This 177-nucleotide RNA was probed chemically with DMS and 2A3. The RNA was probed in 150 mM KOAc, 10 mM MgCl2 and 150 mM bicine (pH 8.5) at 24 C. 2A3 adducts were read by reverse transcription with SuperScript II with manganese.

[RMDB]
RNA sequence: GGGAACGACUCGAGUAGAGUCGAAAAGAGCACCUGAAUCUUUCCCAUUCCUUGCUGCCUCGUGCCGGUGUGGGGACAGAUGGUGCUACAGAAUGAGCAGAGGAAAUCCAGACAGGUUGUUUUCCAUCAUCCAAGAAAGAUUCGUCUUUCUUGGAUGAAAAGAAACAACAACAACAAC
Reactivity to DMS in 0.01 (KOAc 150mM, MgCl2 10mM, bicine 150mM(pH8.5), 24C), signal-to-noise 4, nucleotides 027 to 126: g010a040g000c020a020c000c040u020g000a110a060u000c010u010u000u010c000c000c000a090u000u000c070c020u010u010g040c150u010g030c030c020u020c160g000u020g030c020c280g020g000u010g010u010g000g010g010g000a030c160a020g010a050u000g010g020u000g010c000u000a040c060a070g020a060a100u000g020a130g010c040a100g010a060g000g010a040a070a080u020c030c020a060g020a070c210a070g000g010u000u000g000u020u000u010u000c020c070a300u000
Reactivity to 2A3 in 0.01 (KOAc 150mM, MgCl2 10mM, bicine 150mM(pH8.5), 24C), signal-to-noise 9, nucleotides 027 to 126: g060a000g000c000a000c010c030u060g140a090a060u030c010u020u030u020c010c000c000a010u030u040c010c010u110u240g080c080u080g020c020c040u190c160g120u250g010c010c020g010g010u010g000u010g010g010g000g010a010c070a040g020a000u040g000g000u000g010c000u020a050c010a010g150a050a150u180g020a040g050c060a020g020a040g080g050a060a060a040u060c040c010a030g050a140c040a050g110g060u000u000g010u010u050u040u000c010c010a020u010